About this RNA
Chemical mapping of a 177-nucleotide RNA with DMS and 2A3. The 2A3 profile rests on 1,869 reads. For 2A3 the reverse transcriptase was SuperScript II with manganese.
RNA sequence: GGGAACGACUCGAGUAGAGUCGAAAAUAAAACACGUAACGUGAGCACAGUCGGUAGUGCAGCAGGACCGAAACCUGCAGCGAAACGGAUCAAGACCCUGUUCGCGCAAAAACCGAAGAAAAAAAAACAUUUUACCGUGAUUCGUCACGGUAAAAUGAAAAGAAACAACAACAACAAC
Reactivity to DMS in 0.01 (KOAc 150mM, MgCl2 10mM, bicine 150mM(pH8.5), 24C), signal-to-noise 2, nucleotides 027 to 126: u020a100a120a080a100c020a000c050g000u000a090a050c160g020u000g020a230g020c020a000c000a020g010u000c000g000g000u000a030g010u000g000c000a120g010c020a010g000g000a100c050c050g020a140a090a080c030c000u000g020c010a260g010c000g000a020a020a020c030g020g000a030u010c090a060a160g010a080c240c020c010u000g000u000u000c010g030c030g000c100a080a000a030a040a020c020c010g020a010a240g030a070a000a000a000a030a010a080a010a060
Reactivity to 2A3 in 0.01 (KOAc 150mM, MgCl2 10mM, bicine 150mM(pH8.5), 24C), signal-to-noise 2, nucleotides 027 to 126: u130a000a070a010a010c050a010c030g090u160a300a040c100g000u060g060a040g030c010a000c010a010g060u030c000g000g050u020a010g030u030g000c000a000g000c000a010g030g040a090c050c070g020a080a010a010c010c000u000g040c010a000g000c000g020a040a000a010c030g000g000a050u140c110a080a070g110a120c000c000c000u030g040u030u000c010g000c000g000c050a020a010a000a020a010c010c040g010a030a000g040a030a040a050a010a000a010a000a000a000